[RMDB]
RNA sequence: GGGAACGACUCGAGUAGAGUCGAAAAGAUAUGGAUGUGUCCGAAGCCCAUUGUCAGCCUUCAUGAAUACUUCGGAAACGAAGUAUUCAUGAGGCUUGGAUUUAUGGGUGUAGACACAUCCUAAGUCCUUUUACUACUUCUUCGGAAGUAGUAAAAGAAAAGAAACAACAACAACAAC
Reactivity to DMS in 0.01 (KOAc 150mM, MgCl2 10mM, bicine 150mM(pH8.5), 24C), signal-to-noise 5, nucleotides 027 to 126: g000a070u000a280u020g010g000a010u000g010u000g000u000c030c060g020a180a300g010c000c000c000a020u000u000g010u000c010a040g010c020c000u000u000c000a000u000g000a020a010u000a010c000u000u000c000g000g000a140a100a300c010g010a010a010g010u000a000u000u000c010a000u000g000a020g000g000c010u010u010g020g010a020u000u010u000a000u000g000g000g010u000g000u000a110g010a040c020a020c000a000u000c000c000u000a030a110g010u000c040
Reactivity to 2A3 in 0.01 (KOAc 150mM, MgCl2 10mM, bicine 150mM(pH8.5), 24C), signal-to-noise 4, nucleotides 027 to 126: g040a060u140a070u210g010g000a000u010g000u020g000u110c160c050g080a070a030g010c010c000c030a000u010u020g040u030c010a010g030c010c000u270u300c080a010u000g000a020a000u010a010c000u000u010c000g010g030a020a060a050c020g010a010a010g000u000a000u000u000c000a000u000g000a000g000g000c000u000u080g020g010a010u170u300u300a020u010g000g000g010u300g010u120a000g010a000c000a000c000a000u000c000c000u000a050a010g000u030c000